[RMDB]
RNA sequence: GGGAACGACUCGAGUAGAGUCGAAAAAUGGUUGCUCCUUGGGCAAGGUCACAGAGACGCGCGUCCACUGUUCCGGCUCGCAGCUGACGGUCACCCCGUAGCGCUCGCCAAAGGCGCUCUUGAGGCGCUCUUUUCAACUAUUCGUAGUUGAAAAGAGAAAAGAAACAACAACAACAAC
Reactivity to 2A3 in 0.01 (KOAc 150mM, MgCl2 10mM, bicine 150mM(pH8.5), 24C), signal-to-noise 4, nucleotides 027 to 126: a000u100g040g020u030u090g030c010u030c020c000u030u070g020g000g000c060a070a050g060g020u060c050a040c030a100g140a020g020a090c060g060c020g010c030g160u020c020c030a050c050u060g050u100u040c040c020g000g010c020u030c040g020c030a050g020c030u050g040a040c020g030g040u070c020a050c010c030c020c000g020u030a010g000c010g000c020u040c060g100c050c000a080a080a020g040g000c000g000c000u010c020u060u120g060a090g040g030c040g020
Reactivity to DMS in 0.01 (KOAc 150mM, MgCl2 10mM, bicine 150mM(pH8.5), 24C), signal-to-noise 9, nucleotides 027 to 126: a090u010g010g010u000u000g000c030u000c030c040u000u000g010g000g010c050a080a120g010g010u000c060a090c110a110g000a190g000a070c080g020c090g020c140g010u000c020c040a090c060u010g000u000u000c050c040g010g010c030u000c070g010c050a090g020c040u000g010a070c060g010g010u000c110a120c110c100c020c040g010u000a040g000c020g010c020u000c080g020c080c110a050a090a110g010g010c010g010c020u000c060u000u000g000a140g000g010c060g010
Notes: Structure probing data (2A3 and DMS) for a 177-nucleotide construct. The 2A3 profile rests on 7,227 reads. The DMS profile rests on 16,183 reads.